[RMDB]
Notes:
Chemical mapping of a 177-nucleotide RNA with 2A3 and DMS.
RNA sequence: GGGAACGACUCGAGUAGAGUCGAAAAUGAGAGGAAAGUUGAGCAUUCGGAGUUUCAAAUGUUUUCUCUGUAACCAUUAAUGUGUCCCAUAUAUAGUUUCAUUGGACAAUUAACUAUGGUGAAACUAGGGAUAGGUAUGGUUCGCCAUACCUAUCCCAAAAGAAACAACAACAACAAC
Reactivity to 2A3 in 0.01 (KOAc 150mM, MgCl2 10mM, bicine 150mM(pH8.5), 24C), signal-to-noise 2, nucleotides 027 to 126: u220g000a030g010a000g110g000a040a020a020g010u000u080g000a010g000c050a030u030u040c150g180g160a220g050u120u130u080c000a000a030a030u050g160u020u000u050u000c040u000c000u000g070u030a000a050c000c000a000u000u050a130a050u120g160u000g050u180c000c000c060a020u100a090u090a000u030a110g040u000u050u150c050a010u010u020g000g000a060c040a010a030u080u060a050a050c180u080a050u110g000g030u020g020a010a010a010c000u000a050
Reactivity to DMS in 0.01 (KOAc 150mM, MgCl2 10mM, bicine 150mM(pH8.5), 24C), signal-to-noise 2, nucleotides 027 to 126: u010g000a070g000a000g000g010a030a040a000g000u010u000g030a140g030c030a170u010u010c140g010g010a230g000u010u030u000c010a000a000a080u020g000u010u000u000u000c000u010c000u000g000u010a090a160c270c050a010u030u010a060a030u000g000u000g000u000c000c020c030a120u070a050u010a160u000a040g000u020u000u000c040a060u010u000g000g000a170c260a120a080u060u040a090a140c130u030a110u040g000g020u000g030a000a000a000c000u030a080
The reactions ran in a buffer of 150 mM KOAc, 10 mM MgCl2 and 150 mM bicine (pH 8.5), at 24 C. For 2A3 the reverse transcriptase was SuperScript II with manganese. The 2A3 profile rests on 935 reads. Reactivities are given for positions 27 through 126.